Structure probing data (2A3 and DMS) for a 177-nucleotide construct. The DMS profile rests on 7,456 reads. The 2A3 profile rests on 13,045 reads.

RNA sequence: GGGAACGACUCGAGUAGAGUCGAAAAGAUAUGGAAGCAUUCAAGGCUUUGAUCGGAGAGGUUCGGAAACGAACCAAGUUCCGGGAGCCUUAGAUGCUUCCUAAGUCAAAACUGCGGUUCGCCGCAGCGACAGACUAUAGUUCGCUAUAGUCUGUCGAAAAGAAACAACAACAACAAC
Reactivity to 2A3 in 0.01 (KOAc 150mM, MgCl2 10mM, bicine 150mM(pH8.5), 24C), signal-to-noise 4, nucleotides 027 to 126: g010a010u070a040u160g000g000a000a000g000c000a000u120u150c030a050a000g010g000c020u190u150u140g140a200u300c020g020g010a020g020a040g000g030u000u000c020g020g040a090a090a080c010g010a000a000c020c010a020a020g050u090u030c000c010g000g000g010a000g010c000c010u010u000a020g010a010u010g010c000u000u000c000c000u010a010a000g000u000c000a000a020a170a200c010u000g000c000g000g100u050u130c300g040c110c000g000c000a000g020
Reactivity to DMS in 0.01 (KOAc 150mM, MgCl2 10mM, bicine 150mM(pH8.5), 24C), signal-to-noise 5, nucleotides 027 to 126: g010a050u010a300u010g010g010a030a010g000c000a010u010u000c050a020a020g000g010c000u010u000u010g010a130u020c010g000g020a040g000a230g010g010u000u010c010g000g010a130a100a240c010g010a010a010c000c000a030a110g020u000u000c000c010g000g000g000a010g020c000c000u000u010a020g010a010u000g000c000u000u000c000c000u000a010a090g010u010c060a110a100a110a280c010u000g010c000g000g010u000u010c300g010c010c000g020c000a000g000

For DMS the reverse transcriptase was MarathonRT. It was measured as part of the RMDB library TTRDES.